The record gives the reactivity of an RNA of 177 nucleotides to 2A3. The RNA was probed in 150 mM KOAc, 10 mM MgCl2 and 150 mM bicine (pH 8.5) at 24 C.

[RMDB]
RNA sequence: GGGAACGACUCGAGUAGAGUCGAAAACCGCUCUUAUUUUGAAGAAAUGAGACCAGCAGGGGCAUCCGGGCUGGUACCCGGACUAUCUGCGUGAUCCCUGGUGACUUGAUACAGUCGCUGCACACGAGUUUUGGCUCGAAUUCGUUCGAGCCAAAACAAAAGAAACAACAACAACAAC
Reactivity to 2A3 in 0.01 (KOAc 150mM, MgCl2 10mM, bicine 150mM(pH8.5), 24C), signal-to-noise 2, nucleotides 027 to 126: c000c020g080c070u000c000u030u170a170u030u070u050u090g140a040a060g090a020a000a030u020g000a000g040a020c040c000a000g010c020a020g020g000g110g000c000a000u000c000c000g010g020g010c040u160g020g010u070a050c000c000c010g000g010a000c020u070a150u070c060u030g000c020g010u040g000a040u100c030c000c000u020g040g000u010g000a020c010u050u120g060a000u100a220c070a030g020u020c000g040c030u030g010c080a090c040a000c040g060a050